Structure probing data (DMS and 2A3) for a 307-nucleotide construct. For DMS, 3,030 sequencing reads were counted. DMS adducts were read by reverse transcription with MarathonRT. For 2A3, 2,371 sequencing reads were counted.
[RMDB]
RNA sequence: GGGAACGACUCGAGUAGAGUCGAAAAGACUCGACUACGGUCGAGUCAGGCUAGCGUGAGCUAGCCACUAGAACUUCGGUUCUAGACGUUGACACUUCGGUGUCAACGAAGGACUUGCUACGGCAAGUCCAGGAUAUUCGACGGAGGCACCCAGGAACUACCGUUGAAGCUCGCACGACGGCCUGGGGUCGAGUAUCCCGGUAUUUGUCGCGAGCACUGAGGAACUACUGCUGAAGCCUCCACGGCAGCCUCAGGACAAGUACCGUACCGAGGCAUUCGUGCCUCGGAAAAGAAACAACAACAACAAC
Reactivity to DMS in 0.01 (KOAc 150mM, MgCl2 10mM, bicine 150mM(pH8.5), 24C), signal-to-noise 1, nucleotides 027 to 266: g000a010c000u010c000g020a020c010u000a180c190g070g000u000c010g000a020g000u000c000a070g000g000c040u000a000g000c000g010u070g000a300g000c010u000a000g000c000c000a040c040u000a000g000a000a000c010u000u010c140g020g000u000u000c010u000a020g000a300c060g010u000u000g010a000c000a000c000u000u000c220g120g040u020g000u010c000a000a000c000g000a130a130g000g000a020c000u000u000g000c010u010a070c090g000g000c000a010a010g010u000c000c010a080g010g000a020u000a040u010u000c000g010a010c080g000g000a140g020g020c210a300c000c000c000a000g000g000a110a020c040u030a300c000c000g010u000u000g000a150a130g000c000u000c000g030c000a300c010g000a000c000g000g000c040c020u010g010g000g010g020u000c020g030a030g000u000a050u000c000c030c040g000g000u000a010u000u000u000g010u010c040g000c020g010a030g040c030a210c000u000g030a000g020g000a130a030c070u030a300c000u020g000c000u000g000a020a070g000c070c040u000c070c060a150c010g000g000c000a000g010c010c000u000c010a060g040g000a000c040a010a060g010u000a000c000c000g010u000a100
Reactivity to 2A3 in 0.01 (KOAc 150mM, MgCl2 10mM, bicine 150mM(pH8.5), 24C), signal-to-noise 2, nucleotides 027 to 266: g000a000c000u000c000g010a000c000u040a030c150g090g000u000c000g000a000g000u010c030a000g000g000c000u000a010g000c010g080u140g050a040g020c000u000a000g020c000c010a010c010u000a000g000a000a000c010u050u100c300g120g010u010u000c000u010a010g010a050c030g000u000u000g010a000c000a000c000u070u100c240g180g010u000g010u000c000a000a000c000g030a080a130g000g000a000c010u000u000g010c020u020a050c230g110g020c010a000a010g000u000c000c000a010g010g000a000u000a010u020u000c000g000a000c020g050g140a030g070g020c030a030c020c010c000a010g010g000a090a030c080u230a050c140c000g010u020u010g020a030a000g030c010u010c030g000c010a090c030g010a000c000g000g000c000c000u000g000g010g030g010u000c000g000a000g000u000a010u010c020c090c000g000g000u010a020u000u010u020g010u010c050g000c000g010a000g000c010a000c000u000g010a010g020g000a100a000c110u210a060c000u300g020c000u010g010a040a020g050c010c010u050c030c030a000c010g000g000c000a000g010c000c000u000c000a000g010g010a000c000a000a000g010u010a000c000c020g020u050a030